[RMDB]
This 170-nucleotide RNA was probed chemically with DMS and 2A3. Values cover nucleotides 27 to 129. The RNA was probed in 150 mM KOAc, 10 mM MgCl2 and 150 mM bicine (pH 8.5) at 24 C. High DMS reactivity at an A or C suggests that its Watson-Crick edge is free.
RNA sequence: GGGAACGACUCGAGUAGAGUCGAAAAGAUCCACCUUCGAGGGGGUUCACACCCCCAGUCGGCGGGCCGGCUACUCUUCUUUUCCUUUCCUCGUCCUCCCCGGUCAGCCUCCAGAGUUCCUCUUCUUAACACAGAAACUUCGGUUUCUGUAAAAGAAACAACAACAACAAC
Reactivity to DMS in 0.01 (KOAc 150mM, MgCl2 10mM, bicine 150mM(pH8.5), 24C), signal-to-noise 7, nucleotides 027 to 129: g030a000u030c030c030a140c000c050u000u030c060g030a170g000g000g000g000g000u030u030c290a100c260a130c010c000c010c000c000a020g020u020c000g040g050c040g000g010g000c050c040g010g030c050u000a040c060u000c000u000u000c000u040u040u010u050c030c030u040u040u050c030c030u000c070g000u040c010c000u020c020c000c050c030g030g060u040c070a070g050c010c010u050c010c020a030g030a160g000u030u030c000c000u000c120u020u010c040u020u020a090a120c190
Reactivity to 2A3 in 0.01 (KOAc 150mM, MgCl2 10mM, bicine 150mM(pH8.5), 24C), signal-to-noise 9, nucleotides 027 to 129: g070a060u030c000c020a040c030c020u040u060c050g070a300g020g010g000g000g030u180u180c060a050c020a020c050c010c010c000c000a010g020u020c010g020g010c020g000g030g010c020c010g020g010c020u060a070c030u040c000u090u030c000u050u070u040u060c010c000u040u040u050c000c010u030c020g060u040c010c020u030c000c020c010c000g000g020u030c010a010g010c010c000u010c020c010a020g010a020g070u020u030c000c010u040c020u040u010c000u030u060a100a040c100